Structure probing data (DMS and 2A3) for a 177-nucleotide construct.
2A3 is a SHAPE reagent: it acylates the 2'-hydroxyl of flexible nucleotides of all four kinds.
The RNA was probed in 150 mM KOAc, 10 mM MgCl2 and 150 mM bicine (pH 8.5) at 24 C.
For DMS, 6,375 sequencing reads were counted.
Values cover nucleotides 27 to 126.
DMS adducts were read by reverse transcription with MarathonRT.
RNA sequence: GGGAACGACUCGAGUAGAGUCGAAAAAAGAAACAGUGAUUACAAACUGGAGGCCGAGCAACCAUUUGGCAGUGAUACUGAAAGAUUUGCUGUUAAGAGGGCACUUUCAGGAUUAAAGGAUAAUGAAAAUUUUACGUACGUUCGCGUACGUAAAAUUAAAAGAAACAACAACAACAAC
Reactivity to DMS in 0.01 (KOAc 150mM, MgCl2 10mM, bicine 150mM(pH8.5), 24C), signal-to-noise 4, nucleotides 027 to 126: a080a060g000a180a070a060c040a010g000u010g010a150u020u050a130c300a040a120a060c010u010g000g000a100g020g020c020c010g010a080g000c110a090a110c130c000a080u000u010u010g010g020c150a110g010u000g000a020u020a040c010u010g000a010a000a020g020a140u040u030u020g010c000u000g000u030u030a060a120g030a170g000g000g010c010a040c000u000u000u010c000a000g010g000a030u000u010a030a030a050g000g000a110u000a040a050u000g000a040a070
Reactivity to 2A3 in 0.01 (KOAc 150mM, MgCl2 10mM, bicine 150mM(pH8.5), 24C), signal-to-noise 2, nucleotides 027 to 126: a000a000g200a000a020a000c010a000g030u080g070a130u240u300a070c050a010a130a000c030u020g010g130a070g080g000c010c000g000a020g040c020a080a150c040c010a030u010u040u050g020g000c030a000g030u030g190a020u080a100c000u000g000a000a010a010g050a080u110u140u120g000c050u040g120u280u090a030a050g070a080g160g010g010c020a000c000u000u000u000c000a000g000g000a000u040u140a050a110a030g110g000a080u100a150a060u090g130a090a160